[RMDB]
RNA sequence: GGGAACGACUCGAGUAGAGUCGAAAAAAUCGUCGACGCAUCGACGACGGUCCUGCCAUGAGACCGUAACGAGGACAUAUCGCCUCGAAUGGCGUCGGGGAGCCGGCAGCUUACCCCAAGGAUGAGCAAAAGAAUGAAACGUUCGCGUUUCAUUCAACAUAUGUCUUAUGUUCGCAUAAGACAUAUGAAAAGAAACAACAACAACAAC
Reactivity to DMS in 0.01 (KOAc 150mM, MgCl2 10mM, bicine 150mM(pH8.5), 24C), signal-to-noise 3, nucleotides 027 to 156: a050a030u000c020g000u000c010g010a050c100g020c100a150u000c020g010a030c020g010a030c010g010g030u010c010c020u000g050c060c260a110u000g010a080g020a030c020c010g030u000a060a090c030g000a110g030g010a110c080a180u000a120u000c120g000c000c010u000c010g010a120a090u000g020g020c010g020u000c070g030g000g000g030a110g030c020c030g040g000c050a190g010c030u000u000a080c020c000c020c060a130a150g020g010a090u000g040a040g010c080a100a060a090a130g020a030a000u000g000a020a020a020c010g010u000u010c300g030c040g020u000u000u000c000a020u000u000c000a050a140
Reactivity to 2A3 in 0.01 (KOAc 150mM, MgCl2 10mM, bicine 150mM(pH8.5), 24C), signal-to-noise 9, nucleotides 027 to 156: a000a020u020c010g010u010c000g020a050c100g030c190a150u080c020g010a010c000g000a000c000g000g000u000c000c010u030g000c010c000a040u040g030a030g000a050c010c020g020u030a010a000c000g000a000g000g020a040c030a120u260a070u130c110g030c020c000u000c000g000a010a010u010g000g000c000g010u050c040g000g000g000g020a060g110c030c010g100g010c040a030g010c030u050u120a170c010c000c000c020a010a030g100g010a100u170g040a020g060c060a040a060a030a070g000a000a010u000g000a000a000a000c010g020u050u070c260g010c010g110u000u010u000c000a000u000u010c000a000a000